[RMDB]
This 177-nucleotide RNA was probed chemically with 2A3 and DMS.

RNA sequence: GGGAACGACUCGAGUAGAGUCGAAAAUACCAAACACUCGUAAGUACUAUUUAUUGCGAGUGCAUGGAAGAGGCGAAUAGAGAACGGAACGUUGUCCACCCCUUCAAUCAUCAUCAAAUUGGAUUGCCAGCUUGUUAGUUUUCGAACUAACAAGCUGAAAAGAAACAACAACAACAAC
Reactivity to 2A3 in 0.01 (KOAc 150mM, MgCl2 10mM, bicine 150mM(pH8.5), 24C), signal-to-noise 6, nucleotides 027 to 126: u080a000c000c000a020a060a000c000a000c000u000c010g000u020a020a040g110u050a090c090u070a200u150u300u060a050u030u000g000c000g000a000g010u000g010c040a050u090g040g060a040a040g040a030g090g020c070g050a040a020u080a080g090a010g020a080a020c040g030g020a070a040c060g020u030u070g050u040c010c000a010c020c020c000c010u040u010c020a030a040u040c020a020u020c010a010u040c030a030a070a130u110u080g030g010a040u050u040g050c040
Reactivity to DMS in 0.01 (KOAc 150mM, MgCl2 10mM, bicine 150mM(pH8.5), 24C), signal-to-noise 5, nucleotides 027 to 126: u010a230c000c010a110a140a230c010a000c000u000c000g020u000a010a030g030u010a130c240u030a070u040u020u020a070u010u000g010c000g000a010g000u000g000c130a110u020g000g000a110a070g000a050g000g020c090g000a050a060u020a070g000a120g030a090a100c040g020g010a090a080c090g020u010u010g030u010c030c070a060c020c010c010c020u030u010c030a040a020u010c070a050u020c080a080u030c130a050a060a090u010u030g000g000a070u020u000g000c300